[RMDB]
RNA sequence: GGGAACGACUCGAGUAGAGUCGAAAACGGGCUUGACUUCACGCGCGCCUCGGCAGACCGAAGACGUUGCGGCGGCGCGGCUUCGUCGCGUUGCGACGUCGCGUCGGCAAUCUUGCGCACGAGCCGACCAUAAUCGCGGGUUCGCCCGCGAUUAUGGAAAAGAAACAACAACAACAAC
Reactivity to 2A3 in 0.01 (KOAc 150mM, MgCl2 10mM, bicine 150mM(pH8.5), 24C), signal-to-noise 1, nucleotides 027 to 126: c040g080g040g000c000u050u030g060a140c020u130u060c090a070c170g000c000g000c000g040c040c040u030c000g020g080c040a060g050a070c000c060g050a090a000g020a020c030g020u010u150g090c030g050g000c000g050g000c000g030c000g020g000c000u240u140c050g040u030c010g000c040g270u190u260g100c030g000a010c010g030u000c020g030c050g050u010c050g020g000c060a000a020u070c120u070u100g020c020g000c020a020c050g010a000g000c020c020g000a030
Reactivity to DMS in 0.01 (KOAc 150mM, MgCl2 10mM, bicine 150mM(pH8.5), 24C), signal-to-noise 1, nucleotides 027 to 126: c080g020g030g040c030u000u000g000a120c110u020u000c080a200c190g010c050g060c070g030c060c050u080c090g050g000c050a060g000a110c080c000g000a120a080g000a020c070g030u000u010g020c000g010g010c020g000g000c010g010c050g010g020c040u030u000c120g030u000c010g060c070g000u020u030g030c000g000a000c010g000u000c010g000c090g020u000c010g000g010c010a080a080u000c160u000u000g090c070g000c070a160c080g010a030g000c010c040g000a190
Structure probing data (2A3 and DMS) for a 177-nucleotide construct. For DMS, 870 sequencing reads were counted. Conditions: 150 mM KOAc, 10 mM MgCl2 and 150 mM bicine (pH 8.5), 24 C. For 2A3 the reverse transcriptase was SuperScript II with manganese.